[RMDB]
This 170-nucleotide RNA was probed chemically with 2A3 and DMS.
RNA sequence: GGGAACGACUCGAGUAGAGUCGAAAACGCGCAGGGAGGCAGCCACCAGGAGAAAGCGGAGAAGUCACCUCCAGAGAAACCCUCUCCAACGAACAAAGAAGACCGCUGGGGCGCCAGGAAGAGUCCGAUACCUGUUGGUUCGCCAACAGGAAAAGAAACAACAACAACAAC
Reactivity to 2A3 in 0.01 (KOAc 150mM, MgCl2 10mM, bicine 150mM(pH8.5), 24C), signal-to-noise 7, nucleotides 027 to 129: c050g040c000g010c030a030g010g000g020a030g000g000c020a010g030c010c020a060c010c040a020g010g020a040g030a020a080a010g050c050g030g020a080g020a080a010g030u030c010a060c100c030u010c030c010a020g030a010g000a130a050a040c000c000c000u010c010u000c010c010a060a040c070g030a030a010c050a100a140a050g070a040a000g040a050c020c030g010c050u030g000g020g020g040c030g010c020c020a010g000g010a020a020g040a030g070u010c020c030g020a020u090a120
Reactivity to DMS in 0.01 (KOAc 150mM, MgCl2 10mM, bicine 150mM(pH8.5), 24C), signal-to-noise 7, nucleotides 027 to 129: c100g010c040g030c000a040g050g010g020a050g030g040c050a000g000c090c050a060c010c090a000g000g000a040g020a050a090a110g030c100g000g030a060g000a110a070g030u040c060a100c080c010u050c010c000a130g030a150g020a080a100a120c060c060c020u000c020u040c050c080a050a070c120g030a100a060c120a060a060a110g040a110a050g040a020c090c070g030c050u020g000g030g030g050c040g000c000c030a000g010g000a060a050g000a100g000u020c000c000g020a140u070a070
Reactivities are given for positions 27 through 129.
For 2A3, 20,815 sequencing reads were counted.